Chemical mapping of a 177-nucleotide RNA with 2A3 and DMS. For DMS the reverse transcriptase was MarathonRT. The RNA was probed in 150 mM KOAc, 10 mM MgCl2 and 150 mM bicine (pH 8.5) at 24 C. The data come from the RNA Mapping Database (RMDB), library OK1LIB.

RNA sequence: GGGAACGACUCGAGUAGAGUCGAAAAGAAGGAGAUGAAAGCGACUUUAGAAUCGGCUAACUGAGCAGUCAGAUACAGACGGCAAGUAUCGUCGCCAGAGAUACAGUCGCAAAUAGCCGCAGGAGAAACUAUGCCUGAUAUUCGUAUCAGGCAUAGUAAAAGAAACAACAACAACAAC
Reactivity to 2A3 in 0.01 (KOAc 150mM, MgCl2 10mM, bicine 150mM(pH8.5), 24C), signal-to-noise 8, nucleotides 027 to 126: g120a040a040g070g030a090g010a070u140g050a100a090a030g000c010g010a010c010u090u110u060a060g040a130a090u050c010g010g000c010u020a070a050c020u030g030a030g040c040a040g040u020c020a020g020a130u120a160c050a030g060a020c010g010g000c050a090a030g000u030a080u110c060g040u030c030g040c020c020a020g020a000g000a050u040a030c050a020g000u000c000g000c000a010a070a020u060a020g020c030c030g020c050a040g040g090a070g080a020a070
Reactivity to DMS in 0.01 (KOAc 150mM, MgCl2 10mM, bicine 150mM(pH8.5), 24C), signal-to-noise 7, nucleotides 027 to 126: g000a120a070g030g000a070g010a070u020g010a080a110a120g000c020g000a020c020u000u010u010a070g020a150a170u030c040g000g000c010u030a080a120c030u000g000a080g020c110a050g010u010c010a070g020a120u040a080c200a110g000a070c020g000g000c040a120a070g010u000a040u010c080g000u010c130g000c060c050a080g010a050g020a130u010a020c040a060g000u000c010g000c040a020a090a070u010a090g000c060c020g000c120a100g000g010a090g010a120a110